[RMDB]
RNA sequence: GGGAACGACUCGAGUAGAGUCGAAAAUGAUCGAGAGAUCUAACUAUGUACGCGAGUCAAGUGCACAGACUCGAGCGAAAGCUCGGUCGAAAGACCGCGUACAUGAUUCGGCAAGUGUACAGUCGAACCCUCAUAGUGGUUUCGACCACUAUGAGGGAAAAGAAACAACAACAACAAC
Reactivity to DMS in 0.01 (KOAc 150mM, MgCl2 10mM, bicine 150mM(pH8.5), 24C), signal-to-noise 3, nucleotides 027 to 126: u000g000a020u000c000g010a300g000a230g010a000u000c000u010a090a110c120u030a030u010g010u000a010c000g000c000g010a030g000u000c000a030a040g010u000g000c070a020c040a300g010a010c000u000c010g000a010g010c000g020a110a120a150g000c000u000c000g010g010u010c010g000a070a090a120g010a040c000c000g010c000g000u000a000c000a000u010g010a110u010u000c010g000g000c010a010a080g000u010g000u010a040c100a300g010u000c010g000a050a250
Reactivity to 2A3 in 0.01 (KOAc 150mM, MgCl2 10mM, bicine 150mM(pH8.5), 24C), signal-to-noise 2, nucleotides 027 to 126: u090g000a000u010c020g010a010g000a000g010a090u000c000u000a040a060c040u040a030u060g000u000a000c010g010c000g020a030g010u020c020a170a170g070u060g060c050a020c010a040g010a000c010u010c090g010a000g020c010g080a140a010a000g000c010u000c000g000g000u000c000g020a030a000a010g000a000c000c000g020c000g010u010a000c000a000u000g010a020u030u050c000g000g000c020a180a190g020u010g000u060a030c010a010g000u000c000g000a040a050